[RMDB]
RNA sequence: GGGAACGACUCGAGUAGAGUCGAAAAAAAUGGGAUGGCGAUCUUGGCCGGCCCAAUGCCUAUUCGGCGCUGCCUGCCUCGAUCAUGGAGCGCAAGAUCGAUCUCCUGAUGAAGCAUUUUGGCACAAACGUCCAGUGGUAUUCGUACCACUGGACGUAAAAGAAACAACAACAACAAC
Reactivity to DMS in 0.01 (KOAc 150mM, MgCl2 10mM, bicine 150mM(pH8.5), 24C), signal-to-noise 2, nucleotides 027 to 126: a020a060a010u000g000g030g010a050u010g000g070c020g020a050u000c070u000u000g000g010c010c010g020g000c020c040c040a030a010u010g020c000c020u000a180u020u020c080g020g000c080g030c120u010g010c030c020u000g000c040c020u010c050g020a070u010c030a040u020g000g000a030g000c110g030c060a060a050g000a100u010c070g010a140u000c030u000c000c000u000g000a040u010g010a040a100g000c030a120u000u000u020u010g010g010c010a050c120a050a100
Reactivity to 2A3 in 0.01 (KOAc 150mM, MgCl2 10mM, bicine 150mM(pH8.5), 24C), signal-to-noise 1, nucleotides 027 to 126: a000a000a020u090g010g020g020a030u040g000g020c020g040a040u060c060u070u070g170g000c010c010g040g000c030c000c000a010a040u010g040c000c000u110a180u080u220c060g120g000c000g030c110u090g050c000c020u000g000c000c000u020c010g050a020u010c010a010u150g030g000a020g000c000g030c080a100a000g060a160u090c030g050a110u050c010u020c000c010u020g030a060u020g020a010a010g000c050a080u170u170u090u060g010g000c050a010c040a080a100